Structure probing data (2A3 and DMS) for a 207-nucleotide construct. For 2A3 the reverse transcriptase was SuperScript II with manganese. It was measured as part of the RMDB library M2RFPK. The reactions ran in a buffer of 150 mM KOAc, 10 mM MgCl2 and 150 mM bicine (pH 8.5), at 24 C. The 2A3 profile rests on 2,541 reads. High DMS reactivity at an A or C suggests that its Watson-Crick edge is free.

RNA sequence: GGGAACGACUCGAGUAGAGUCGAAAACUCUUGUUAGGUGAAAGUUGAUGGUCGCCGUGUCAGUCCAUGCCUUUGAAAACAGUUCUAUGUAGUAGGGAGUCGAGAACCUAUGAGAGUUAGAACUAGCUAUGCCUUGGACUCUUCGGAGUCCAAGGAACAUGCAUUACGGGUUCGCCCGUAAUGCAUGAAAAGAAACAACAACAACAAC
Reactivity to 2A3 in 0.01 (KOAc 150mM, MgCl2 10mM, bicine 150mM(pH8.5), 24C), signal-to-noise 3, nucleotides 027 to 156: c020u040c030u010u090g080u050u080a080g060g010u060g080a110a100a070g040u080u080g050a090u050g030g000u040c020g010c050c020g030u030g050u030c030a020g010u000c040c020a030u110g040c020c020u050u110u160g130a100a070a010a020c050a040g000u010u010c020u040a040u090g040u040a050g000u010a000g010g040g030a020g060u050c050g040a020g040a200a040c010c000u010a020u030g020a040g010a010g040u030u020a010g010a020a010c020u010a010g030c030u040a030u170g030c000c000u000u000g000g000a010c000u000c000u020u040c190g090g000a000g000u020c000c000a000a000g000g000a000a010
Reactivity to DMS in 0.01 (KOAc 150mM, MgCl2 10mM, bicine 150mM(pH8.5), 24C), signal-to-noise 3, nucleotides 027 to 156: c020u000c040u000u010g010u000u000a050g030g030u010g010a060a070a140g010u000u000g000a140u010g030g050u000c030g050c010c020g010u000g010u000c030a090g010u000c050c050a070u000g000c030c010u000u000u000g000a070a080a060a060c040a070g010u000u000c010u000a050u000g000u000a300g010u000a040g010g030g010a130g010u000c110g010a210g000a110a140c010c010u000a010u000g000a220g030a170g000u000u000a050g020a030a040c010u000a100g040c040u000a070u000g000c000c000u000u010g020g010a030c010u000c000u000u000c280g040g010a030g020u000c000c000a000a000g010g000a010a020